[RMDB]
RNA sequence: GGGAACGACUCGAGUAGAGUCGAAAAUACUAGAGUAUACCUCAAUACUACAACCACUGAAGAUAGAGUAAGUGGCAUUACAGCAGUAGAUAAAGCUAUUCGAAAACAUCCUGAUGCGCAUUUUGUUGAAUUUGUAGAAGAUGGAAAAGCCACUUCAUGAAGAGACGAGAUUCGUCUCGUCUCUUCAAAAAGAAACAACAACAACAAC
Reactivity to DMS in 0.01 (KOAc 150mM, MgCl2 10mM, bicine 150mM(pH8.5), 24C), signal-to-noise 1, nucleotides 027 to 156: u000a040c070u000a070g000a080g040u000a070u000a100c020c000u000c060a080a060u000a010c060u010a100c040a080a100c020c020a020c080u020g000a170a290g030a300u000a130g040a170g020u000a110a030g020u000g070g010c010a110u010u010a140c100a150g040c050a050g020u000a090g000a230u000a060a090a130g010c030u000a050u000u000c050g040a080a060a090a100c050a060u010c050c000u000g000a050u010g030c000g030c030a080u010u000u010u000g020u020u020g000a060a150u000u000u000g000u000a170g000a020a110g000a080u000g010g000a020a030a080a110g000c030c020a060c010u000u010c040a260
Reactivity to 2A3 in 0.01 (KOAc 150mM, MgCl2 10mM, bicine 150mM(pH8.5), 24C), signal-to-noise 1, nucleotides 027 to 156: u220a000c100u020a010g030a000g040u070a030u070a120c000c020u040c010a010a010u050a200c100u030a060c000a080a100c020c030a030c020u030g040a080a000g070a300u300a070g020a010g170u000a000a020g000u000g000g000c000a080u110u190a080c060a060g030c050a040g000u030a000g000a220u070a010a130a000g010c060u060a050u030u060c000g120a130a120a070a050c000a020u060c020c000u000g080a060u100g050c020g000c060a030u090u120u150u000g090u020u030g040a120a130u000u000u110g000u020a040g000a090a030g150a140u060g000g000a020a140a080a000g090c000c030a000c010u050u050c000a010